[RMDB]
RNA sequence: GGGAACGACUCGAGUAGAGUCGAAAAUGCUUUUGUUUUGGGUGGUGCAAUCUUGUACCCGCCGCCCGCGCCCGCCUGGAUGGACUUUGUUACCUUGAUAAUGCCAUUCUCGCGCCGCAGGUCAAUAUCACUCCAUGUAAGCGCCGUAGCUUCACCACGCUGAACAAAGAUUCGUCUUUGUUCAGCGAAAAGAAACAACAACAACAAC
Reactivity to 2A3 in 0.01 (KOAc 150mM, MgCl2 10mM, bicine 150mM(pH8.5), 24C), signal-to-noise 1, nucleotides 027 to 156: u050g010c000u050u110u030u140g110u030u110u090u090g050g020g010u050g000g000u030g010c030a010a060u110c070u040u120g010u030a050c000c000c050g020c000c030g010c000c020c010g000c010g000c000c010c000g000c020c000u000g000g000a020u020g000g070a140c060u100u050u020g010u060u100a110c050c060u080u300g070a090u150a150a040u070g000c030c000a000u000u020c020u000c030g020c010g000c010c020g030c030a060g040g000u020c030a050a010u090a030u150c040a070c150u010c010c020a030u070g080u160a060a040g000c070g040c010c000g170u070a030g080c040u110u070c000a020c070c000a020